[RMDB]
This 177-nucleotide RNA was probed chemically with 2A3 and DMS.
Reactivities are given for positions 27 through 126.
For DMS the reverse transcriptase was MarathonRT.
It was measured as part of the RMDB library OK1LIB.

RNA sequence: GGGAACGACUCGAGUAGAGUCGAAAACAAACGGCUGGACGGUUUGCCGCUGGCGAUCGAGCUGGCGGCUGCGCGGCUGCGGUCGAUGACGCUUGACGAGAUCAUCGAUGGCUUGCGUGACCGGUUCCACCCGGGGCUAUUUCGAUAGCCCCGGGUGAAAAGAAACAACAACAACAAC
Reactivity to 2A3 in 0.01 (KOAc 150mM, MgCl2 10mM, bicine 150mM(pH8.5), 24C), signal-to-noise 4, nucleotides 027 to 126: c040a000a090a010c020g070g000c050u050g060g100a000c020g020g050u080u140u170g000c000c010g000c000u000g000g000c010g100a250u190c110g070a170g040c010u010g000g010c000g000g000c000u000g000c000g010c000g020g000c030u100g000c050g100g050u000c000g000a010u010g020a000c080g090c240u180u230g110a080c130g040a060g090a260u050c000a000u000c000g010a010u070g080g010c030u100u250g000c000g050u050g050a020c000c000g070g020u080u000c010
Reactivity to DMS in 0.01 (KOAc 150mM, MgCl2 10mM, bicine 150mM(pH8.5), 24C), signal-to-noise 1, nucleotides 027 to 126: c080a050a090a220c130g050g000c150u070g080g030a000c080g040g110u000u020u000g030c020c000g000c020u000g000g000c000g000a110u080c160g000a120g070c000u000g000g000c000g000g010c010u020g020c000g010c000g000g020c040u000g000c070g080g010u030c020g000a020u000g000a020c040g010c000u020u000g000a090c200g000a100g010a110u010c010a010u000c010g000a040u000g030g000c010u000u110g010c000g020u000g000a000c010c000g040g000u030u000c010